[RMDB]
RNA sequence: GGGAACGACUCGAGUAGAGUCGAAAAACGUGGAGGUCUGCUAGCGUUGGUGUCCUACAAUACCCUCGCGUGACCUAUGUCUAGGGGUGAAAGGCCCAUCGAAUCCGGAAACAGCUGGUUCCGACCGCCGGUACUCGCAAUUCGUUGCGAGUACCGGAAAAGAAACAACAACAACAAC
Reactivity to 2A3 in 0.01 (KOAc 150mM, MgCl2 10mM, bicine 150mM(pH8.5), 24C), signal-to-noise 1, nucleotides 027 to 126: a000c030g020u050g210g000a050g010g000u010c000u010g020c000u000a030g030c000g070u000u000g070g000u030g000u090c000c000u020a000c040a000a130u090a140c000c040c000u040c000g040c050g000u000g150a150c000c000u100a080u210g120u040c070u030a040g000g030g140g000u030g080a140a120a000g000g000c000c000c120a000u000c000g000a100a040u000c000c010g000g040a000a000a090c010a070g120c080u040g000g050u000u000c030c000g010a020c010c030g000
Chemical mapping of a 177-nucleotide RNA with 2A3.
For 2A3, 395 sequencing reads were counted.
Conditions: 150 mM KOAc, 10 mM MgCl2 and 150 mM bicine (pH 8.5), 24 C.
Values cover nucleotides 27 to 126.
For 2A3 the reverse transcriptase was SuperScript II with manganese.
Source: RMDB library RFM100, as collected in RNAgym.